[RMDB]
RNA sequence: GGGAACGACUCGAGUAGAGUCGAAAAUGGUCAUUCGUGACCAGCUGACUCCUAAGUCUGACGACGUCGGUAGCACGAUAAGCAUCGGAAACGAUGCUUUUGACGUGCUAUAAUCGACGUACGUCAGAUAUGGAAAUAUGAUCACUUCGGUGAUCAACGUUUCAGUACACUUCGGUGUACUGAAACGAAAAGAAACAACAACAACAAC
Reactivity to DMS in 0.01 (KOAc 150mM, MgCl2 10mM, bicine 150mM(pH8.5), 24C), signal-to-noise 1, nucleotides 027 to 156: u010g000g010u010c010a050u010u000c270g000u000g060a020c000c000a030g010c110u000g020a050c080u000c000c060u010a080a300g010u000c000u010g020a070c000g040a080c000g040u000c000g010g010u000a030g000c000a010c000g020a100u000a060a010g020c000a030u000c000g020g060a180a150a300c000g020a010u000g000c000u000u010u000u000g010a150c060g000u000g020c010u000a010u000a190a100u000c000g000a020c010g050u000a010c000g030u000c010a000g030a010u000a100u010g000g010a090a070a080u000a140u000g000a040u000c000a010c000u000u000c290g060g020u000g010a010u000c000a010a070
Reactivity to 2A3 in 0.01 (KOAc 150mM, MgCl2 10mM, bicine 150mM(pH8.5), 24C), signal-to-noise 3, nucleotides 027 to 156: u080g000g000u010c040a030u110u120c300g190u050g010a000c010c000a000g040c100u090g110a140c040u020c010c000u060a120a070g020u000c000u010g010a000c000g010a000c000g000u000c000g010g000u000a000g000c000a000c000g010a010u020a030a000g000c000a000u010c010g060g050a040a050a060c030g000a000u000g000c000u010u000u000u020g020a010c000g000u000g000c000u010a010u010a010a040u110c020g000a000c000g010u080a110c000g000u000c000a000g010a000u010a000u040g010g080a000a120a020u260a080u130g000a010u000c000a010c010u080u040c300g120g000u000g000a000u000c010a000a030
Source information: An RNA of 207 nucleotides, treated with DMS and 2A3 and read out base by base. For DMS, 2,346 sequencing reads were counted. The RNA was probed in 150 mM KOAc, 10 mM MgCl2 and 150 mM bicine (pH 8.5) at 24 C. The 2A3 profile rests on 3,106 reads.